[RMDB]
RNA sequence: GGGAACGACUCGAGUAGAGUCGAAAAGGCGCAUCUCCGGGGUCACCUGGGAGCACGGUACGCUGAACAUGUCCGAUGCGAGGUUCGUGUAAAGGUCUUUGCACUGCAUGGUCAGACUCCUGCCAGCUUCAGGGUGACGGCCAAACCUGCGGUCAGCCGUUCAUGUAAAGUUCGCUUUACAUGAACGAAAAGAAACAACAACAACAAC
Reactivity to DMS in 0.01 (KOAc 150mM, MgCl2 10mM, bicine 150mM(pH8.5), 24C), signal-to-noise 1, nucleotides 027 to 156: g020g000c040g010c050a050u010c010u010c020c070g030g010g030g040u000c040a020c020c010u000g000g020g020a100g050c010a110c100g040g000u000a080c300g000c000u010g000a000a150c020a030u000g010u000c150c050g030a110u000g000c000g030a040g010g030u000u000c030g040u000g020u000a110a150a180g000g000u000c000u000u010u030g010c000a070c050u080g000c020a060u010g010g000u000c030a060g000a120c070u000c000c030u000g000c000c000a040g020c020u000u000c040a090g020g000g020u010g010a030c010g010g020c020c020a040a080a050c000c030u010g020c020g020g020u010c050a140g020c060
Reactivity to 2A3 in 0.01 (KOAc 150mM, MgCl2 10mM, bicine 150mM(pH8.5), 24C), signal-to-noise 5, nucleotides 027 to 156: g050g000c030g000c060a070u040c070u030c090c070g020g000g050g000u010c000a010c010c010u040g050g050g010a010g010c020a020c100g000g010u090a050c170g000c020u000g000a010a000c000a000u030g100u130c100c060g130a210u010g010c020g010a030g040g020u170u180c060g020u130g120u300a150a150a100g060g000u010c020u040u030u090g010c010a010c000u000g000c000a000u000g000g030u010c000a010g030a300c040u030c020c040u050g000c030c020a020g000c010u000u020c010a010g040g000g000u000g020a010c020g020g040c000c000a040a060a070c010c030u040g020c050g020g070u090c050a020g060c020